[RMDB]
RNA sequence: GGGAACGACUCGAGUAGAGUCGAAAACUGGAUCAACAUCACCUUCUCCAGCUAUACCAACAGCAACACUGGCUUGACCGAGUGGAAGGCCAACUACACGCUGAUCUAUUCGAAGGGCGAUGCCAUCUCGUCCCGUAUAGUUCGCUAUACGGGACGAAAAAGAAACAACAACAACAAC
Reactivity to 2A3 in 0.01 (KOAc 150mM, MgCl2 10mM, bicine 150mM(pH8.5), 24C), signal-to-noise 3, nucleotides 027 to 126: c030u030g040g040a040u070c080a040a080c020a010u030c010a040c010c000u030u030c010u000c010c020a020g000c050u060a050u090a170c020c020a020a070c020a030g000c010a000a090c020a020c130u020g020g010c030u040u050g050a170c020c020g230a070g050u280g020g000a030a010g040g010c000c000a020a010c010u080a020c050a010c120g010c010u040g080a140u090c060u100a140u120u260c060g020a050a000g040g050g010c090g030a030u050g030c050c000a100u040c020
Reactivity to DMS in 0.01 (KOAc 150mM, MgCl2 10mM, bicine 150mM(pH8.5), 24C), signal-to-noise 2, nucleotides 027 to 126: c070u000g000g020a030u000c050a050a130c080a030u000c060a020c010c000u000u000c000u020c040c060a130g020c060u000a070u000a240c120c070a130a120c030a030g000c010a060a180c260a110c090u010g010g000c030u000u000g000a290c030c000g000a070g040u010g010g030a210a060g030g000c000c010a010a080c070u000a080c200a100c200g030c050u010g000a020u020c140u000a190u020u000c070g020a060a050g000g020g000c020g010a040u040g030c190c090a020u000c070
Conditions: 150 mM KOAc, 10 mM MgCl2 and 150 mM bicine (pH 8.5), 24 C. This 177-nucleotide RNA was probed chemically with 2A3 and DMS. It was measured as part of the RMDB library OK2TRN. For 2A3, 2,858 sequencing reads were counted. 2A3 adducts were read by reverse transcription with SuperScript II with manganese. The DMS profile rests on 1,044 reads.